[RMDB]
RNA sequence: GGGAACGACUCGAGUAGAGUCGAAAAUGGAGGGACGCAGUAGGCUAAGGAAUGCAUGCGAUUGGAAGUGCAUGUCCAAGCAAUGAGUCUUGAGUAGAGUUAAAUGCUUUACUCUUUAAGGACAAGUUGUGACGGGGAGCGAAAUAAUAGUAGCGAACAUCGGCCAGGAGUUCGCUCCUGGCCGAUGAAAAGAAACAACAACAACAAC
Reactivity to 2A3 in 0.01 (KOAc 150mM, MgCl2 10mM, bicine 150mM(pH8.5), 24C), signal-to-noise 5, nucleotides 027 to 156: u090g040g010a030g010g010g010a010c040g000c020a020g010u080a030g030g040c030u040a030a030g030g010a100a050u070g000c020a000u020g010c040g140a130u070u120g040g050a070a040g020u010g050c010a010u060g050u020c010c010a050a010g010c000a010a010u040g010a010g030u010c000u080u050g010a000g000u000a000g000a000g010u070u130a090a130a040u290g000c000u000u000u000a000c000u000c000u030u100u070a060a030g010g000a000c000a010a040g010u000u020g020u030g030a040c090g010g000g000g010a010g010c020g050a070a010a020u160a050a040u080a080g060u030a000g030c010g020a010a010
Reactivity to DMS in 0.01 (KOAc 150mM, MgCl2 10mM, bicine 150mM(pH8.5), 24C), signal-to-noise 3, nucleotides 027 to 156: u010g010g000a160g020g030g040a040c100g040c050a120g030u010a090g020g010c040u000a080a110g030g000a260a050u000g020c020a020u000g000c040g000a160u000u010g070g020a090a070g010u000g000c020a040u000g020u000c040c020a070a300g000c020a040a050u010g010a300g010u000c020u000u000g020a030g040u000a010g000a020g010u000u000a050a110a160u010g010c010u000u000u000a010c000u000c000u000u000u010a090a080g000g010a030c010a030a300g010u000u000g000u000g030a110c090g000g000g020g010a070g020c030g030a020a070a070u000a050a120u000a060g000u010a080g030c000g010a040a060

An RNA of 207 nucleotides, treated with 2A3 and DMS and read out base by base.
Conditions: 150 mM KOAc, 10 mM MgCl2 and 150 mM bicine (pH 8.5), 24 C.
Reactivities are given for positions 27 through 156.
The 2A3 profile rests on 5,298 reads.